[RMDB]
RNA sequence: GGGAACGACUCGAGUAGAGUCGAAAAGCAGGUGGUGCUCCUCUCCAAGCUUGAACAGUAUCAGCACUUGGGCGGCAUGGCAGGCAAUGCUGUGGAAGCGCUGCACGCCGACCUCACAAACCUGGACCACCAGGGUGGAGUUCGCUCCACCCUGGUGAAAAGAAACAACAACAACAAC
Reactivity to 2A3 in 0.01 (KOAc 150mM, MgCl2 10mM, bicine 150mM(pH8.5), 24C), signal-to-noise 2, nucleotides 027 to 126: g010c050a010g080g010u050g000g030u000g000c010u020c010c000u060c010u010c030c010a070a090g010c030u080u130g050a070a030c050a090g050u140a090u200c040a000g040c020a010c100u090u070g030g000g030c010g000g000c020a070u100g150g000c020a000g100g090c040a110a190u280g000c000u010g000u120g210g190a010a010g020c050g020c030u000g040c050a020c030g020c000c000g130a290c040c020u060c000a060c050a070a060a000c010c040u030g010g040a030c040
Reactivity to DMS in 0.01 (KOAc 150mM, MgCl2 10mM, bicine 150mM(pH8.5), 24C), signal-to-noise 2, nucleotides 027 to 126: g030c050a050g000g040u010g020g000u000g000c060u000c030c080u000c120u030c000c040a080a100g000c110u000u020g030a060a120c150a090g000u030a110u000c080a030g030c010a120c020u010u000g000g000g030c130g020g010c030a240u000g050g010c000a020g010g020c070a050a150u010g000c000u010g010u010g020g020a160a080g000c000g030c020u000g000c060a050c100g000c000c000g000a060c000c020u030c100a140c140a070a070a030c110c020u010g020g010a230c130

The record gives the reactivity of an RNA of 177 nucleotides to 2A3 and DMS. DMS adducts were read by reverse transcription with MarathonRT.